[RMDB]
RNA sequence: GGGAACGACUCGAGUAGAGUCGAAAAUAUGUAAGACGUACUUGUUUCUUAAUUGAACUUGUACAUGAAUAAAAGUCUUUAGUGGGCCACUUUUGGUAAGCAGAACUGGCGAUGUGGGAUGAACCAAUGAUUCGUAAACCUUCGGGUUUACGAAUCAAAAAGAAACAACAACAACAAC
Reactivity to DMS in 0.01 (KOAc 150mM, MgCl2 10mM, bicine 150mM(pH8.5), 24C), signal-to-noise 1, nucleotides 027 to 126: u020a010u010g020u010a050a110g000a130c070g000u000a010c000u040u000g010u000u000u010c000u000u010a260a120u070u010g000a010a040c030u000u020g000u020a010c010a240u050g000a080a080u100a040a100a090a170g040u000c040u000u000u000a120g000u000g000g040g000c020c000a030c070u040u000u050u000g020g040u010a040a120g050c030a010g000a020a090c040u020g020g000c050g000a030u000g020u050g040g000g040a140u000g010a070a080c040c000a010a170
Reactivity to 2A3 in 0.01 (KOAc 150mM, MgCl2 10mM, bicine 150mM(pH8.5), 24C), signal-to-noise 1, nucleotides 027 to 126: u160a100u190g050u040a110a060g090a000c050g000u000a000c000u110u000g190u250u120u000c020u000u130a220a300u210u070g000a000a040c000u000u000g000u000a000c010a020u020g020a020a000u210a000a010a030a050g020u000c000u060u080u020a130g020u100g040g030g030c060c000a000c010u030u050u040u060g050g000u090a060a080g010c000a010g000a010a110c030u000g030g020c000g000a000u120g000u040g120g050g000a030u010g000a000a000c060c000a050a150

Annotation
The record gives the reactivity of an RNA of 177 nucleotides to DMS and 2A3. DMS adducts were read by reverse transcription with MarathonRT. DMS (dimethyl sulfate) methylates the pairing face of unpaired adenines and cytosines. It was measured as part of the RMDB library RFM100.